[RMDB]
RNA sequence: GGGAACGACUCGAGUAGAGUCGAAAAGAAAGAAAGAAUCAAUGUUGGAGAGCUAUUUGCAAGGUACCUAAUUGUUUGAUUAUUGAUUCUCAAUUGGUCCCCUCCAAGUAGCUCUAUUGCAUUGUAAUUACCUCAAAGUUUUCGAACUUUGAGGUAAAAAAGAAACAACAACAACAAC
Reactivity to 2A3 in 0.01 (KOAc 150mM, MgCl2 10mM, bicine 150mM(pH8.5), 24C), signal-to-noise 7, nucleotides 027 to 126: g110a030a080a010g160a040a110a000g120a020a060u140c010a010a000u020g020u020u070g050g050a010g000a000g020c010u000a010u000u000u010g010c020a020a030g010g000u020a010c010c020u150a060a010u020u010g090u130u110u130g060a050u050u150a110u160u280g180a140u240u000c010u010c000a000a010u010u000g000g000u050c040c040c000c000u020c020c000a000a000g000u000a000g000c000u000c000u000a010u000u030g000c000a000u000u010g000u030a000a060
Reactivity to DMS in 0.01 (KOAc 150mM, MgCl2 10mM, bicine 150mM(pH8.5), 24C), signal-to-noise 5, nucleotides 027 to 126: g000a120a080a090g010a090a070a110g020a170a080u030c010a020a000u000g000u000u000g010g000a020g010a010g000c000u000a000u000u000u000g020c270a040a060g000g000u020a010c030c010u030a010a030u000u000g000u010u030u010g010a050u010u050a200u050u020g010a070u020u000c020u000c000a010a010u000u000g020g020u000c040c010c010c050u000c300c010a020a020g010u000a000g000c010u000c010u000a000u010u010g010c010a000u000u000g020u000a080a090